Record summary: The record gives the reactivity of an RNA of 177 nucleotides to 2A3 and DMS. The reactions ran in a buffer of 150 mM KOAc, 10 mM MgCl2 and 150 mM bicine (pH 8.5), at 24 C. For 2A3 the reverse transcriptase was SuperScript II with manganese.
RNA sequence: GGGAACGACUCGAGUAGAGUCGAAAAGAUAUGGAUCUCUACUCUCACUUGGACCAUUAGUCGGAAACGACUAAUGCUAGUGAACGUGAGUAGAGGAUCCUAAGUCAAAGCCCGCUUCGGCGGGCAACGACUAUAGACUGUUCGCAGUCUAUAGUCGAAAAGAAACAACAACAACAAC
Reactivity to 2A3 in 0.01 (KOAc 150mM, MgCl2 10mM, bicine 150mM(pH8.5), 24C), signal-to-noise 2, nucleotides 027 to 126: g020a010u070a020u180g010g010a000u000c010u000c000u000a020c010u000c000u020c010a090c120u150u280g110g080a080c020c060a010u000u010a010g010u000c010g020g030a050a030a070c020g010a000c020u010a000a000u010g000c000u030a030g010u040g130a300a060c300g190u140g070a000g020u010a020g000a070g030g020a010u010c000c000u000a090a000g020u020c000a150a090a000g000c020c010c030g010c040u060u090c300g190g000c010g000g000g000c010a010a010
Reactivity to DMS in 0.01 (KOAc 150mM, MgCl2 10mM, bicine 150mM(pH8.5), 24C), signal-to-noise 3, nucleotides 027 to 126: g000a050u010a300u010g010g000a000u000c000u000c010u000a020c010u010c010u010c000a040c030u010u010g020g020a140c300c000a010u000u000a000g010u000c000g020g000a100a070a160c000g030a010c010u010a000a010u010g010c050u010a020g010u000g020a050a110c300g040u000g000a020g010u000a010g010a050g010g010a000u000c000c000u000a030a110g010u010c030a130a170a140g000c000c010c000g010c000u000u020c170g040g000c000g000g000g020c000a010a010